[RMDB]
RNA sequence: GGGAACGACUCGAGUAGAGUCGAAAACGGGGUUUGAAGGCGACUGCCAAGGAUGCAGAGAUUGAGCGCUAUCUACCCUUGGUGAUCAACGCCGAUGGCAACACUACGCAGGCUGAGCUGCAAACGCUGGCUGAACAUACUGCGCGGGUGCGCCGUGCACAACACAAUACUUCGGUAUUGUGUUGUGAAAAGAAACAACAACAACAAC
Reactivity to 2A3 in 0.01 (KOAc 150mM, MgCl2 10mM, bicine 150mM(pH8.5), 24C), signal-to-noise 7, nucleotides 027 to 156: c050g020g020g020g000u030u110u170g140a110a020g010g000c020g030a050c080u100g000c010c010a020a020g030g010a050u140g060c110a040g020a010g020a160u100u130g060a100g070c070g020c130u050a040u050c010u030a080c000c000c000u010u000g000g000u060g010a150u110c080a080a050c020g000c010c000g030a040u060g030g000c040a130a010c020a070c060u050a030c030g000c010a000g040g000c040u080g080a020g000c010u040g010c040a130a120a080c110g020c050u060g020g000c010u040g040a070a010c030a040u170a130c020u030g010c010g010c050g050g000g010u040g020c040g000c010c010g010u050g000
Reactivity to DMS in 0.01 (KOAc 150mM, MgCl2 10mM, bicine 150mM(pH8.5), 24C), signal-to-noise 3, nucleotides 027 to 156: c030g010g030g030g020u000u000u000g000a100a190g000g040c030g020a130c080u000g000c000c010a020a050g030g020a230u000g060c030a080g020a070g020a190u010u010g020a160g020c050g020c040u020a160u010c000u000a040c010c000c000u000u010g020g010u010g010a140u010c040a110a180c050g010c020c000g020a130u000g010g040c010a070a070c030a050c020u000a040c020g010c020a030g030g010c080u000g010a070g030c000u000g010c030a100a060a080c150g020c050u010g030g010c030u000g010a100a090c060a080u010a300c020u000g000c010g020c010g000g010g010u000g020c060g000c010c020g030u010g000